[RMDB]
RNA sequence: GGGAACGACUCGAGUAGAGUCGAAAAUAGUGGUUUUAACUUACUUUGUUAUACAAGUAAUUAAAAUCUAUCCCGGGGUCAAGUAUGAUGAUUGGAGCCGAAUGGCCUAGAAAAUGCAUCCGUUCCGUCCUUUACUAGCUUUCGAGCUAGUAAAGGAAAAAGAAACAACAACAACAAC
Reactivity to DMS in 0.01 (KOAc 150mM, MgCl2 10mM, bicine 150mM(pH8.5), 24C), signal-to-noise 3, nucleotides 027 to 126: u030a080g020u020g010g010u000u000u000u000a010a000c230u010u000a000c000u000u000u010g010u020u030a140u030a220c090a020a000g000u010a000a050u000u000a010a000a010a010u010c010u000a080u000c000c000c010g030g000g010g000u020c120a050a100g010u020a080u020g010a060u000g010a110u010u000g010g000a110g040c020c010g010a100a090u020g010g010c010c040u020a070g010a050a080a040a050u040g010c030a040u000c020c060g010u000u000c000c010g010
Reactivity to 2A3 in 0.01 (KOAc 150mM, MgCl2 10mM, bicine 150mM(pH8.5), 24C), signal-to-noise 5, nucleotides 027 to 126: u120a010g140u170g030g000u000u010u000u000a020a040c050u000u010a000c000u100u070u120g070u150u220a230u050a190c050a000a000g000u000a000a010u010u000a000a000a000a000u020c030u020a110u030c010c000c000g040g020g000g000u030c060a070a050g040u070a110u230g030a010u020g030a030u030u100g070g030a050g000c000c000g100a200a190u290g020g000c000c010u060a060g080a040a110a010a000u200g050c010a010u000c020c010g020u030u010c000c010g010
Conditions: 150 mM KOAc, 10 mM MgCl2 and 150 mM bicine (pH 8.5), 24 C. This 177-nucleotide RNA was probed chemically with DMS and 2A3. It was measured as part of the RMDB libraries RFM100 and RFMREP. For 2A3 the reverse transcriptase was SuperScript II with manganese.